[RMDB]
RNA sequence: GGGAACGACUCGAGUAGAGUCGAAAACGCCAAGUCCCGAGCAAAACCGGUUGACUUCAGCUCAGGAUCAGCGCCCAACUUCUCAAAGUCGUGCACACCGAGGGUAAUGAUGUAUUCGUUGGGCGCCCACCCCGUUCAAGUUCGCUUGAACGGGGUGAAAAGAAACAACAACAACAAC
Reactivity to 2A3 in 0.01 (KOAc 150mM, MgCl2 10mM, bicine 150mM(pH8.5), 24C), signal-to-noise 4, nucleotides 027 to 126: c060g020c010c000a040a010g010u000c000c020c010g000a010g000c050a040a190a070a050c030c020g180g000u090u200g060a110c020u110u060c070a020g000c020u020c030a010g050g000a070u090c080a000g020c010g010c020c000c000a010a000c010u130u060c030u020c070a080a130a030g040u020c020g090u110g100c040a030c000a050c080c110g050a220g000g070g010u100a170a100u060g050a010u150g080u240a090u070u120c030g000u010u000g010g000g000c020g010c000c000